[RMDB]
RNA sequence: GGGAACGACUCGAGUAGAGUCGAAAAGCAGAUCCGGAAUGGCCUCUGCGAACACUUGACACACGGAAAGUCCUGUCUUGUGGAUUAGGACGUUCUACCACCGGUGGGGCCGGUAGUUCGUCCGAAAGGCAAGCAGGAGGUUCGCCUCUUGCUUGCCAAAAGAAACAACAACAACAAC
Reactivity to 2A3 in 0.01 (KOAc 150mM, MgCl2 10mM, bicine 150mM(pH8.5), 24C), signal-to-noise 6, nucleotides 027 to 126: g010c010a000g000a030u030c000c010g050g190a190a090u190g060g020c040c040u030c000u010g020c030g020a120a030c040a010c010u040u070g040a010c010a010c000a040c060g050g110a170a040a010g070u100c000c000u010g010u020c000u010u020g020u020g000g040a050u010u090a030g000g000a000c000g000u000u010c000u000a000c000c000a000c010c000g130g080u180g040g110g010g030c070c030g000g000u000a000g000u000u000c010g000u000c010c000g000a010a010a000
Reactivity to DMS in 0.01 (KOAc 150mM, MgCl2 10mM, bicine 150mM(pH8.5), 24C), signal-to-noise 5, nucleotides 027 to 126: g010c020a030g020a060u030c020c010g000g000a150a070u040g000g000c130c150u000c000u010g010c030g000a100a110c080a040c010u000u000g020a060c040a050c280a070c160g010g010a120a110a090g000u020c030c060u000g000u010c030u010u010g010u010g000g000a080u020u020a060g000g000a000c000g020u000u000c000u020a020c010c000a170c020c010g000g040u050g010g010g000g020c170c090g000g000u000a010g000u000u010c000g010u010c000c000g000a030a030a050
Chemical mapping of a 177-nucleotide RNA with 2A3 and DMS. It was measured as part of the RMDB library OK1LIB. For DMS, 11,649 sequencing reads were counted. Conditions: 150 mM KOAc, 10 mM MgCl2 and 150 mM bicine (pH 8.5), 24 C.